[RMDB]
RNA sequence: GGGAACGACUCGAGUAGAGUCGAAAAUUGAACAGUUUCGCAUGGAACACGACUGUGAAGGCUCGGUUGAGCGAGCUGAAGCUGAAUUUGCUGAAAUUCAGGCAUAUAUUCGGAAUAUGGUUAAGAAAUCCGGAGUGAUUUUCGAAUCACUCCGGAUAAAAGAAACAACAACAACAAC
Reactivity to 2A3 in 0.01 (KOAc 150mM, MgCl2 10mM, bicine 150mM(pH8.5), 24C), signal-to-noise 2, nucleotides 027 to 126: u070u120g030a080a040c000a050g060u030u200u050c030g090c010a060u040g100g010a070a050c080a050c060g030a030c040u000g000u060g230a000a020g030g000c010u000c000g110g020u060u110g140a130g180c000g040a020g000c000u000g050a030a000g000c020u020g000a000a000u020u000u160g130c150u240g050a000a090a030u120u180c020a000g080g070c130a060u030a030u110a040u120u010c000g040g100a050a080u230a060u180g080g010u030u100a090a020g090a080a120
Reactivity to DMS in 0.01 (KOAc 150mM, MgCl2 10mM, bicine 150mM(pH8.5), 24C), signal-to-noise 1, nucleotides 027 to 126: u020u010g060a070a130c050a080g000u000u000u000c000g020c010a060u020g050g030a060a140c080a180c030g000a040c020u000g020u010g010a220a140g020g020c120u000c010g000g010u010u000g020a160g010c030g000a020g000c000u000g000a030a100g010c010u020g000a030a000u050u000u020g030c140u020g000a010a010a020u010u020c070a110g000g000c100a000u000a060u000a130u000u000c040g000g000a010a060u030a040u030g000g010u040u010a020a080g000a010a140